[RMDB]
RNA sequence: GGGAACGACUCGAGUAGAGUCGAAAAGCGUACUACCGAGACAUGCGAUAUGGAACAGCGAUAAGAUAGCUCCCAAAUAGGAGCUAUCUUUUGACGCUGGGAGAGUAUCGCAACAGCUCGGUAUCGCAAAACGUGGAAGCCUUCGGGCUUCCACGAACUACACUUAAGACUUCGGUCUUAAGUGUAGAAAAGAAACAACAACAACAAC
Reactivity to DMS in 0.01 (KOAc 150mM, MgCl2 10mM, bicine 150mM(pH8.5), 24C), signal-to-noise 1, nucleotides 027 to 156: g000c010g040u000a050c070u010a060c000c000g020a120g010a100c020a300u020g000c000g050a030u000a010u000g000g000a300a210c010a070g000c020g030a120u000a020a030g000a040u000a000g030c000u010c000c000c010a050a140a160u010a040g030g010a000g000c000u000a000u000c000u000u000u020u000g010a180c080g020c000u000g000g020g000a250g010a180g010u000a020u000c000g020c010a040a060c040a070g000c000u000c000g000g020u010a010u000c030g000c020a010a070a010a160c020g010u000g010g030a020a010g030c000c000u010u000c300g050g030g000c010u000u020c000c000a010c000g020a050a080
Reactivity to 2A3 in 0.01 (KOAc 150mM, MgCl2 10mM, bicine 150mM(pH8.5), 24C), signal-to-noise 2, nucleotides 027 to 156: g000c010g020u100a100c040u000a000c050c000g020a000g030a040c040a090u050g000c010g000a000u000a010u160g090g020a090a030c010a000g030c020g030a040u010a080a000g010a000u000a000g000c010u050c000c030c060a130a200a080u300a090g000g000a000g010c000u010a000u000c000u000u000u000u020g010a000c000g000c000u000g000g030g000a160g010a010g010u010a000u000c050g000c050a010a020c020a030g010c000u000c000g010g000u000a010u030c000g000c000a010a120a000a070c000g000u000g000g000a010a000g000c020c000u070u050c280g040g030g020c000u000u000c000c000a000c000g000a000a000